[RMDB]
RNA sequence: GGGAACGACUCGAGUAGAGUCGAAAAGAAAUUACGUUUCCUUUACACUUCUCAAACCGGGAUCAAGAGAAGCAAAGCAUCCCUCAUAUCCACGAUGGAGGGCGUCGUGGAGUAUACUGUACCAAAAAGAGCGAACACGGCUUCGGCCGUGUUCGAACCGUCAUAGAACGUUCGCGUUCUAUGACGGAAAAGAAACAACAACAACAAC
Reactivity to 2A3 in 0.01 (KOAc 150mM, MgCl2 10mM, bicine 150mM(pH8.5), 24C), signal-to-noise 3, nucleotides 027 to 156: g050a000a060a010u160u120a010c040g020u000u040u000c010c000u030u030u090a060c080a020c010u040u040c020u030c100a200a090a090c030c040g050g040g000a060u090c060a230a000g000a010g000a040a020g020c090a030a030a000g000c000a040u010c010c010c000u080c070a070u070a030u070c000c000a000c010g010a010u030g020g090a060g060g040g010c010g020u020c000g020u000g010g000a020g010u010a000u020a020c090u090g090u140a070c040c060a020a070a010a030a030g070a020g140c000g000a000a010c000a000c000g000g010c030u020u020c080g050g000c000c000g000u010g010u000u000c000g000a000a000